An RNA of 177 nucleotides, treated with DMS and 2A3 and read out base by base. The RNA was probed in 150 mM KOAc, 10 mM MgCl2 and 150 mM bicine (pH 8.5) at 24 C. For 2A3 the reverse transcriptase was SuperScript II with manganese.
[RMDB]
RNA sequence: GGGAACGACUCGAGUAGAGUCGAAAAAAAAAGAUAUGGAAGAGGGAGCUCCACGGCGCCUAGCGCUCCCAUCGGAAACGAUGGAGAGCGGGUCGGUGGAGCGAAGAACUCUUCCUAAGUCAAAAAAGAUAGAACAUAAGUUCGCUUAUGUUCUAUCAAAAGAAACAACAACAACAAC
Reactivity to DMS in 0.01 (KOAc 150mM, MgCl2 10mM, bicine 150mM(pH8.5), 24C), signal-to-noise 3, nucleotides 027 to 126: a060a040a100a150a060g000a030u000a300u000g000g010a020a020g010a040g000g000g000a100g020c000u010c000c010a010c000g010g030c230g020c050c020u000a050g020c090g010c010u000c000c000c010a000u000c010g020g000a160a090a150c000g000a020u000g000g010a240g010a010g060c010g010g000g010u010c020g010g040u000g010g010a020g010c010g000a030a060g020a080a160c000u000c000u000u000c000c000u000a020a080g000u010c030a000a070a090a050a130a130
Reactivity to 2A3 in 0.01 (KOAc 150mM, MgCl2 10mM, bicine 150mM(pH8.5), 24C), signal-to-noise 2, nucleotides 027 to 126: a000a000a000a050a080g120a090u180a030u100g010g000a000a010g000a010g040g050g010a000g000c000u000c030c000a010c020g160g000c140g170c080c080u130a140g300c040g000c120u020c020c000c000a000u030c000g010g020a110a040a040c030g000a000u000g000g030a140g000a000g300c080g000g000g000u050c150g130g050u030g020g020a010g000c000g000a010a010g000a000a010c000u000c000u000u040c000c000u000a040a010g030u000c040a000a040a030a200a070a010